[RMDB]
Chemical mapping of a 177-nucleotide RNA with 2A3 and DMS.
RNA sequence: GGGAACGACUCGAGUAGAGUCGAAAAGCGCCUACCACAAGGAUUCGGCGAGGUUGCUGCGCAAGGACGGGCGGGGCGAUAGCAGUCGUUGCUGCGAUCGUGGCCUGGCGUAGAAAUUGACGUCGGGCAAUAACAUCGACUUCGGUCGAUGUUAUUGAAAAGAAACAACAACAACAAC
Reactivity to 2A3 in 0.01 (KOAc 150mM, MgCl2 10mM, bicine 150mM(pH8.5), 24C), signal-to-noise 4, nucleotides 027 to 126: g030c040g060c000c010u040a050c030c030a110c040a140a070g100g010a120u150u130c050g010g010c030g030a040g000g040u070u090g030c050u050g020c020g010c030a050a080g100g020a040c050g020g010g030c040g000g010g060g000c010g010a010u010a020g000c020a020g000u080c130g250u190u300g020c000u000g030c000g030a030u040c010g030u050g030g010c000c000u010g000g010c000g000u020a010g120a060a160a040u140u160g030a010c000g000u020c000g000g020g000
Reactivity to DMS in 0.01 (KOAc 150mM, MgCl2 10mM, bicine 150mM(pH8.5), 24C), signal-to-noise 7, nucleotides 027 to 126: g010c080g010c010c010u000a110c030c040a130c140a110a200g010g010a140u000u000c110g010g010c100g010a180g010g000u000u000g000c030u000g010c070g010c060a090a070g010g010a100c080g010g000g010c080g010g010g010g010c020g000a030u000a050g000c020a030g000u000c220g010u010u010g010c000u000g010c020g010a020u000c030g030u000g010g010c000c010u000g000g000c000g010u000a040g000a050a080a170u010u010g010a040c000g020u000c000g000g000g000
It was measured as part of the RMDB library OK2TST.
Values cover nucleotides 27 to 126.
The RNA was probed in 150 mM KOAc, 10 mM MgCl2 and 150 mM bicine (pH 8.5) at 24 C.